[RMDB]
RNA sequence: GGGAACGACUCGAGUAGAGUCGAAAAGAAAGUGGCGGACGGGUCAGUAACAGGAUCGAACGUACCCCGAGGUGGGGGAUAGCGGUGGGAAACUGCCGGUAAUACCUCAUGAUCUCUCCGGAGCAAACAGAGGAUAUCAGUUCGCUGAUAUCCUCUGAAAAGAAACAACAACAACAAC
Reactivity to DMS in 0.01 (KOAc 150mM, MgCl2 10mM, bicine 150mM(pH8.5), 24C), signal-to-noise 4, nucleotides 027 to 126: g000a080a090a110g000u030g010g010c080g000g000a110c100g030g000g010u030c050a050g020u020a080a080c170a160g020g000a070u010c030g000a050a080c060g010u010a080c040c000c000c040g010a120g010g030u000g000g000g000g000g000a110u010a060g000c030g000g000u000g000g000g000a130a050a140c010u010g000c010c000g000g010u000a040a060u020a190c010c000u010c010a020u010g000a080u020c030u010c020u020c060c040g000g000a070g000c140a080a070a190
Reactivity to 2A3 in 0.01 (KOAc 150mM, MgCl2 10mM, bicine 150mM(pH8.5), 24C), signal-to-noise 5, nucleotides 027 to 126: g080a000a080a010g070u100g040g010c050g020g010a050c060g030g050g000u050c020a040g020u070a090a050c020a090g040g050a040u070c060g050a040a050c020g020u120a090c010c010c000c000g010a060g010g030u110g000g000g000g010g000a000u030a010g070c000g000g010u030g030g000g000a030a040a040c010u030g010c000c000g000g010u040a040a010u130a170c000c010u000c000a040u070g120a110u040c030u000c000u000c030c050g030g010a050g010c010a030a020a070